[RMDB]
RNA sequence: GGGAACGACUCGAGUAGAGUCGAAAAGGUCUCGGCGGCGGUCGGCGAUCAGGUCGAAGUGUUGCUCGACGGCGGCAUCCGGCGGGGCAGCGAUGUCGUCAAGGCGGUGGCGCUGGGCGCGCGCGCGGUCCAGCACUAUAUUCGUAUAGUGCUGGACAAAAGAAACAACAACAACAAC
Reactivity to 2A3 in 0.01 (KOAc 150mM, MgCl2 10mM, bicine 150mM(pH8.5), 24C), signal-to-noise 3, nucleotides 027 to 126: g060g000u020c010u010c040g050g010c010g010g000c020g040g200u040c010g030g030c020g040a190u110c060a020g000g090u040c030g050a100a120g040u090g060u180u130g030c020u030c030g040a030c030g020g030c000g010g000c000a010u040c040c010g050g030c050g030g000g050g000c010a010g000c010g030a060u040g010u070c020g010u030c030a030a030g070g010c050g040g040u070g040g000c040g000c040u030g020g050g000c040g000c000g010c000g000c000g010c030g060
Reactivity to DMS in 0.01 (KOAc 150mM, MgCl2 10mM, bicine 150mM(pH8.5), 24C), signal-to-noise 4, nucleotides 027 to 126: g010g000u000c010u000c020g020g020c010g010g000c050g010g010u000c030g010g010c030g000a080u010c100a090g010g000u000c020g010a060a110g010u010g010u000u000g020c060u010c040g000a070c040g010g000c020g010g010c040a040u000c030c040g010g030c070g000g000g010g020c060a060g000c090g000a040u000g010u000c020g020u000c040a070a130g010g020c060g010g020u010g010g000c020g020c030u000g010g000g000c030g010c050g000c040g010c050g000c100g010